The record gives the reactivity of an RNA of 207 nucleotides to 2A3. The 2A3 profile rests on 712 reads. Source: RMDB library OK3TST, as collected in RNAgym. The RNA was probed in 150 mM KOAc, 10 mM MgCl2 and 150 mM bicine (pH 8.5) at 24 C.
[RMDB]
RNA sequence: GGGAACGACUCGAGUAGAGUCGAAAACAAAACCCCAUCGAUAGAGUGAAUGAUAUGUUUGGUCGGGGUCGCGUUGGUAUUUUCAAUCAGAGAUUCGAUGAUGAAGACGAUAUUGAUGACGACAACGAUGCAGACUUCUCGGACGAACCUCAGAUUGUGUUGGGUGGAGAUUCGUCUCCACCCAACAAAAAGAAACAACAACAACAAC
Reactivity to 2A3 in 0.01 (KOAc 150mM, MgCl2 10mM, bicine 150mM(pH8.5), 24C), signal-to-noise 2, nucleotides 027 to 156: c050a010a030a020a070c000c000c000c000a020u080c050g060a110u100a170g120a020g050u090g040a100a100u150g070a030u080a040u120g040u000u020u010g010g030u000c000g000g030g020g000u000c000g000c010g030u010u010g040g010u010a060u000u120u020u100c020a060a070u000c000a010g030a020g030a210u200u180c110g010a030u140g020a030u080g030a050a110g030a090c080g000a000u000a000u020u100g010a010u040g080a060c000g000a010c000a000a030c000g020a000u170g240c010a010g000a000c000u040u070c040u030c040g020g000a070c070g020a020a080c000c030u000c030a060g070a170u120u070g070